[RMDB]
RNA sequence: GGGAACGACUCGAGUAGAGUCGAAAAUGCAGCUAAGGGUUACAUUGCUGGAAUACAGAAUUUUAAGGAAACGCUGUAUUAUCAGAACAAUGUCUUUAUGUCUGAAGCUAAAUGCUGGGUGGAAACCGUAUUAGCGAAGGUUCGCCUUCGCUAAUACAAAAGAAACAACAACAACAAC
Reactivity to 2A3 in 0.01 (KOAc 150mM, MgCl2 10mM, bicine 150mM(pH8.5), 24C), signal-to-noise 2, nucleotides 027 to 126: u060g020c050a000g000c010u010a010a020g030g030g000u060u070a010c000a020u040u000g000c000u000g010g010a000a000u040a000c010a020g010a020a060u070u000u070u140a280a110g170g050a060a000a020c070g000c010u000g040u000a020u020u000a090u030c010a000g010a100a060c010a040a000u010g020u020c030u040u180u040a070u120g120u000c010u030g040a070a030g000c040u040a130a030a040u140g010c020u070g020g060g000u080g070g000a050a060a040c020c030
Reactivity to DMS in 0.01 (KOAc 150mM, MgCl2 10mM, bicine 150mM(pH8.5), 24C), signal-to-noise 3, nucleotides 027 to 126: u020g010c060a040g000c030u000a040a090g010g000g010u010u020a130c020a010u000u000g000c000u020g010g000a020a000u000a000c010a010g010a050a100u000u040u000u000a080a180g020g000a040a050a070c300g000c000u020g000u000a000u000u000a080u000c000a010g010a080a120c020a010a000u000g010u000c110u000u000u000a010u030g010u020c020u010g000a130a020g000c030u000a060a050a100u010g010c010u000g010g010g020u010g010g000a070a040a090c160c100
Conditions: 150 mM KOAc, 10 mM MgCl2 and 150 mM bicine (pH 8.5), 24 C. Structure probing data (2A3 and DMS) for a 177-nucleotide construct. Values cover nucleotides 27 to 126.